[RMDB]
RNA sequence: GGGAACGACUCGAGUAGAGUCGAAAAUUUGGGUCUACGGGGCGGAUAUGCAAGGCAGUAAUAUUCGUCAGCUAGGAGCAAGUCAGGGAAAAAUUGCGCGCCAUUUCGGUCUCGUCUUGGGCGCCGACAGAUUACUCAUGUUCGCAUGAGUAAUCUGAAAAGAAACAACAACAACAAC
Reactivity to 2A3 in 0.01 (KOAc 150mM, MgCl2 10mM, bicine 150mM(pH8.5), 24C), signal-to-noise 4, nucleotides 027 to 126: u040u010u040g030g000g020u030c030u030a050c090g030g000g050g010c010g010g020a030u040a010u070g030c030a040a060g140g000c040a020g040u070a080a130u040a040u080u070c020g020u020c030a020g030c030u030a040g020g070a020g020c020a040a010g040u050c070a030g070g000g030a000a070a050a030a060u090u150g020c080g010c020g040c050c000a020u030u010u030c040g020g090u070c110u070c170g030u000c040u030u020g080g000g020c010g010c000c000g000a010
Reactivity to DMS in 0.01 (KOAc 150mM, MgCl2 10mM, bicine 150mM(pH8.5), 24C), signal-to-noise 4, nucleotides 027 to 126: u000u010u010g010g010g010u000c040u020a070c140g000g010g010g020c020g020g000a020u000a020u000g010c070a120a090g010g030c100a090g000u010a080a060u000a070u010u000c030g010u000c020a050g030c110u010a080g010g010a090g010c060a030a040g010u000c070a090g000g000g010a040a040a040a070a100u020u010g010c130g020c020g040c010c000a060u000u000u010c010g010g010u010c130u010c030g010u000c050u000u000g020g010g000c020g020c010c060g000a120